An RNA of 177 nucleotides, treated with DMS and 2A3 and read out base by base. For 2A3 the reverse transcriptase was SuperScript II with manganese. The 2A3 profile rests on 898 reads. DMS adducts were read by reverse transcription with MarathonRT.
RNA sequence: GGGAACGACUCGAGUAGAGUCGAAAAAUAAAAUGUGCGUCCCUCCCGAUGCUGCGCGCUCGGUCGAAGAGGACGACCAUCGCCGAUAGAGGACGACCGGUCUUCGGUCAAGGGAAAAAGAAAAAAAGAACACAUUAGACUUCGGUCUAAUGUGUUCAAAAGAAACAACAACAACAAC
Reactivity to DMS in 0.01 (KOAc 150mM, MgCl2 10mM, bicine 150mM(pH8.5), 24C), signal-to-noise 1, nucleotides 027 to 126: a090u010a040a050a080a020u000g020u000g000c020g010u010c010c000c000u010c010c000c020g030a060u010g060c010u030g030c090g050c150g060c030u000c040g020g030u030c090g040a110a070g060a090g010g000a040c050g000a040c020c010a100u020c100g000c060c030g010a170u000a100g020a100g000g000a080c080g000a160c020c020g040g000u000c040u010u000c000g000g040u000c050a090a030g000g000g000a030a070a050a010a150g020a040a000a020a090a040a100a220
Reactivity to 2A3 in 0.01 (KOAc 150mM, MgCl2 10mM, bicine 150mM(pH8.5), 24C), signal-to-noise 1, nucleotides 027 to 126: a000u150a030a040a060a050u060g030u080g060c030g000u020c000c000c000u000c050c000c010g010a050u300g010c030u070g060c100g000c020g030c130u010c030g060g020u020c060g040a040a020g050a110g030g000a000c000g010a010c000c010a020u100c050g000c080c010g030a040u070a150g090a020g070g050a020c010g040a060c040c000g110g130u030c090u220u160c050g030g000u050c000a020a030g000g010g050a000a030a030a070a030g100a010a080a000a000a060a000a010